[RMDB]
RNA sequence: GGGAACGACUCGAGUAGAGUCGAAAACUAAGAAGGGAACUGCAGAACCCAAAUUAGAAAGAAACCACAGGCAGAGAACAGAAGGGUGAAAGUUCAAGCAAGCUAGCCGGCAAAAAAGCAAACUUGAGGACUCGUAUAGAUUCGUCUAUACGAGUCCAAAAGAAACAACAACAACAAC
Reactivity to DMS in 0.01 (KOAc 150mM, MgCl2 10mM, bicine 150mM(pH8.5), 24C), signal-to-noise 2, nucleotides 027 to 126: c020u010a030a040g010a200a270g000g010g000a030a040c030u010g000c250a110g000a180a170c000c000c000a030a100a160u070u020a090g000a090a100a040g020a060a160a060c020c020a050c160a020g000g010c020a040g000a140g010a030a110c060a060g000a010a020g010g000g000u010g010a030a050a130g000u000u070c050a040a100g000c070a040a070g000c040u020a110g050c030c040g000g040c030a000a010a010a070a030a050g000c050a070a170a080c060u000u000g000a300
Reactivity to 2A3 in 0.01 (KOAc 150mM, MgCl2 10mM, bicine 150mM(pH8.5), 24C), signal-to-noise 2, nucleotides 027 to 126: c020u020a040a010g020a000a040g050g000g010a040a010c070u100g030c040a030g020a100a040c000c020c020a070a100a000u020u020a010g080a040a120a000g080a050a060a010c010c010a030c010a040g030g000c010a020g010a000g010a140a010c010a070g050a150a020g090g000g000u080g000a150a060a010g000u030u040c020a000a000g010c030a020a000g020c020u100a040g030c020c010g040g000c000a080a090a060a000a000a060g030c060a060a090a000c010u000u010g020a020